[RMDB]
The record gives the reactivity of an RNA of 177 nucleotides to 2A3 and DMS.
For DMS the reverse transcriptase was MarathonRT.
The data come from the RNA Mapping Database (RMDB), library TTRDEL.
Conditions: 150 mM KOAc, 10 mM MgCl2 and 150 mM bicine (pH 8.5), 24 C.
Reactivities are given for positions 27 through 126.
For 2A3 the reverse transcriptase was SuperScript II with manganese.
For 2A3, 5,298 sequencing reads were counted.
RNA sequence: GGGAACGACUCGAGUAGAGUCGAAAAGAUAUGGACCCACAGAGACAAUGAUGUCGGAAACGAUUGAGUCUACUGUGAGGGUCCUAAGUCAAAGUCUUCCCUUCGCGUUCGCGCGAAGGGAAGACAACAUUCAGGUAUUCUUCGGAAUACCUGAAUGAAAAGAAACAACAACAACAAC
Reactivity to 2A3 in 0.01 (KOAc 150mM, MgCl2 10mM, bicine 150mM(pH8.5), 24C), signal-to-noise 3, nucleotides 027 to 126: g040a020u100a050u180g010g000a000c010c000c010a010c000a010g020a000g010a010c010a060a300u220g070a060u150g080u040c000g040g000a070a080a040c020g010a000u040u100g030a030g010u000c010u130a300c020u300g030u050g110a280g070g000g000u010c010c000u000a090a010g050u020c080a230a040a010g000u000c000u000u000c040c000c020u000u020c020g000c030g030u020u070c250g000c020g000c000g130a000a030g000g010g000a000a010g000a010c000a000a000
Reactivity to DMS in 0.01 (KOAc 150mM, MgCl2 10mM, bicine 150mM(pH8.5), 24C), signal-to-noise 2, nucleotides 027 to 126: g000a040u020a300u020g000g000a030c000c000c010a040c010a020g000a100g000a030c020a110a120u020g020a120u000g000u000c000g000g000a120a090a180c010g000a020u000u000g000a140g010u000c010u000a100c010u000g000u000g030a080g010g000g000u000c000c000u000a030a120g010u000c050a080a100a100g000u000c000u000u010c000c010c000u000u010c000g000c000g010u000u020c240g000c000g050c000g020a020a000g000g000g000a000a000g020a010c010a040a090